Conditions: 150 mM KOAc, 10 mM MgCl2 and 150 mM bicine (pH 8.5), 24 C. This 177-nucleotide RNA was probed chemically with 2A3. It was measured as part of the RMDB library OK1LIB. Values cover nucleotides 27 to 126. 2A3 adducts were read by reverse transcription with SuperScript II with manganese.
RNA sequence: GGGAACGACUCGAGUAGAGUCGAAAAUAACUGUGAUGUCAUAGUGCCGAGACUACUUUCCUUUAACCAUUGGGGUUAAGUUGGGCAGCCCAUUUAGUUUACACGCGCAUAAGACUAAUUUACAAAACGGUAAUCUUGCUUUCGAGCAAGAUUACCGAAAAGAAACAACAACAACAAC
Reactivity to 2A3 in 0.01 (KOAc 150mM, MgCl2 10mM, bicine 150mM(pH8.5), 24C), signal-to-noise 2, nucleotides 027 to 126: u160a000a010c100u070g030u090g110a200u090g020u070c000a030u040a090g030u000g080c000c000g010a010g040a110c010u030a010c000u020u040u060c000c000u000u030u080a110a040c040c000a110u140u300g120g030g000g000u080u040a060a000g030u000u000g000g030g020c030a020g010c000c010c010a090u120u110u030a040g020u000u010u080a050c140a020c030g060c040g000c000a000u000a090a040g030a000c030u050a030a000u000u150u230a010c050a000a140a000a020